Structure probing data (2A3) for a 207-nucleotide construct. Values cover nucleotides 27 to 156. Source: RMDB library M2RFPK, as collected in RNAgym. Conditions: 150 mM KOAc, 10 mM MgCl2 and 150 mM bicine (pH 8.5), 24 C. 2A3 adducts were read by reverse transcription with SuperScript II with manganese.
RNA sequence: GGGAACGACUCGAGUAGAGUCGAAAACCUACCCAAGGUGAAAGGUCCUUCUCUCGCAAUGUGUAACUCAUGAUUCUCAUGACCCCUGGUUGGAGAGAUCCGGACUAGGAGCCAGGGGGCCUCUGAUAAAGCCAGACGCACUUCGGUGCGUCUGGAAGAUACGGUUAAGCUUCGGCUUAACCGUAUCAAAAGAAACAACAACAACAAC
Reactivity to 2A3 in 0.01 (KOAc 150mM, MgCl2 10mM, bicine 150mM(pH8.5), 24C), signal-to-noise 2, nucleotides 027 to 156: c000c010u050a070c000c000c020a070a070g000g010u100g050a080a080a050g010g000u030c000c020u030u000c020u020c010u000c020g150c110a030a090u060g070u020g020u150a020a140c030u030c010a020u020g040a210u300u040c150u020c130a020u070g020a040c000c000c000c060u080g030g000u080u060g060g000a030g000a020g000a040u070c090c110g000g030a030c000u020a060g000g040a040g020c020c010a000g010g000g000g020g000c010c020u050c050u050g070a130u110a150a070a030g060c000c000a010g000a000c000g010c000a000c020u040u100c160g090g000u010g000c020g000u000c000u000g000g000a000a000